[RMDB]
RNA sequence: GGGAACGACUCGAGUAGAGUCGAAAAAUGGACUCAAAUGCUUGAAGGAACUGGUGCUCCAGAAUUCCUUCUUAGGGUUCUUGCAAGUAACGGUACGACUAUCAUGAACGAAGUUGGUGGCGGUGGAUUCCUGAAGAACUCUACCUAUCGCGCUCGAACUAUAUGGUCCUUUCGAGGACCAUAUAGUAAAAGAAACAACAACAACAAC
Reactivity to 2A3 in 0.01 (KOAc 150mM, MgCl2 10mM, bicine 150mM(pH8.5), 24C), signal-to-noise 4, nucleotides 027 to 156: a000u080g020g000a010c010u010c060a080a110a070u220g030c060u100u100g000a000a000g010g000a020a020c000u000g010g020u170g090c110u070c130c000a010g030a090a190u050u030c000c000u020u000c000u000u010a010g010g000g000u020u010c020u020u080g050c060a110a040g020u070a100a020c050g060g030u060a030c020g030a030c030u070a050u220c020a070u150g090a070a050c090g030a060a010g040u040u070g040g030u040g060g020c070g020g030u040g020g030a080u060u070c010c020u120g020a030a040g000a030a020c020u000c000u050a030c010c020u060a040u110c050g010c010g000c060u040c050g030a020
Reactivity to DMS in 0.01 (KOAc 150mM, MgCl2 10mM, bicine 150mM(pH8.5), 24C), signal-to-noise 3, nucleotides 027 to 156: a120u000g030g010a040c030u000c040a080a140a070u010g030c080u010u000g000a050a040g000g040a010a300c000u000g010g010u000g050c250u000c050c020a080g000a060a150u010u000c000c000u000u010c040u000u000a040g020g000g040u000u000c010u000u020g030c050a060a070g000u010a070a080c030g020g000u000a040c010g030a040c030u010a070u000c030a090u010g020a160a180c120g000a070a120g020u010u000g010g010u000g000g020c000g020g020u000g010g010a150u000u000c020c020u020g010a090a080g010a070a050c030u000c000u000a030c020c030u000a030u020c030g010c060g030c010u000c020g000a160
Chemical mapping of a 207-nucleotide RNA with 2A3 and DMS.
The RNA was probed in 150 mM KOAc, 10 mM MgCl2 and 150 mM bicine (pH 8.5) at 24 C.
The 2A3 profile rests on 2,169 reads.
For DMS the reverse transcriptase was MarathonRT.
It was measured as part of the RMDB library OK3TST.